[RMDB]
RNA sequence: GGGAACGACUCGAGUAGAGUCGAAAAACCUUUGUGCAACUGGAGGAACAGAACUACUGAUUCACGUGCCCAUUGGGCACGUUAUUUCAGCUGUUCCGAUGAAAGUUGCACUCUGGUAAAAGAGUGACUAAAAAAGUUCGCUUUUUUAGUCACUCAACAUGCGUUGAACGUUCGCGUUCAACGCAUGAAAAGAAACAACAACAACAAC
Reactivity to 2A3 in 0.01 (KOAc 150mM, MgCl2 10mM, bicine 150mM(pH8.5), 24C), signal-to-noise 2, nucleotides 027 to 156: a000c000c000u000u010u000g000u000g000c010a000a000c000u000g010g010a040g010g010a020a010c010a010g030a140a020c150u300a060c010u300g000a000u000u030c050a000c030g010u020g000c030c010c060a300u210u300g000g010g000c000a010c000g000u000u020a030u010u200u040c000a000g020c010u000g000u000u000c000c000g000a000u000g000a000a020a000g000u010u010g000c000a000c000u010c000u000g000g000u050a130a140a000a000g010a040g000u000g000a000c000u040a000a000a000a000a010a040g000u090u200c250g080c000u060u030u000u000u000u000a000g000u000c000a000c000u000c000a010a000

Chemical mapping of a 207-nucleotide RNA with 2A3. The reactions ran in a buffer of 150 mM KOAc, 10 mM MgCl2 and 150 mM bicine (pH 8.5), at 24 C. For 2A3 the reverse transcriptase was SuperScript II with manganese.